[RMDB]
RNA sequence: GGGAACGACUCGAGUAGAGUCGAAAAUCUGAAGGGAAGGAGCCUUUAGUACGAGAGGAACGGGGGUUCGUGACCUCUAGUUUAUCGGUUGUCCGACAGGGCAGUUGCCGAGUAGCCACGUCAUACGCCCUGUGGGAACUUUCGAGUUCCCACAGGGAAAAGAAACAACAACAACAAC
Reactivity to 2A3 in 0.01 (KOAc 150mM, MgCl2 10mM, bicine 150mM(pH8.5), 24C), signal-to-noise 3, nucleotides 027 to 126: u020c010u030g050a030a010g050g040g030a060a150g020g030a070g160c000c000u020u070u010a020g010u040a010c050g000a000g000a080g110g040a010a020c020g010g000g000g020g030u040u050c040g060u120g020a040c010c000u000c010u030a070g020u010u080u070a090u040c020g000g030u210u010g000u030c030c000g000a040c110a110g000g020g010c000a030g020u160u160g060c000c000g010a040g000u040a010g000c000c000a040c010g000u000c030a080u030a110c090g000
Reactivity to DMS in 0.01 (KOAc 150mM, MgCl2 10mM, bicine 150mM(pH8.5), 24C), signal-to-noise 2, nucleotides 027 to 126: u010c010u010g010a070a050g020g020g000a250a140g000g010a050g030c040c070u010u040u010a070g030u000a060c050g010a140g000a130g030g010a140a090c140g000g000g020g020g000u000u020c080g040u000g000a140c010c000u000c000u000a020g000u030u000u020a150u000c000g000g000u000u000g020u000c010c080g020a060c300a150g000g000g000c030a000g010u010u050g000c010c000g000a020g020u050a050g000c000c040a020c100g010u010c060a070u030a180c260g000

An RNA of 177 nucleotides, treated with 2A3 and DMS and read out base by base. For DMS the reverse transcriptase was MarathonRT. The data come from the RNA Mapping Database (RMDB), libraries RFM100 and RFMREP. The reactions ran in a buffer of 150 mM KOAc, 10 mM MgCl2 and 150 mM bicine (pH 8.5), at 24 C.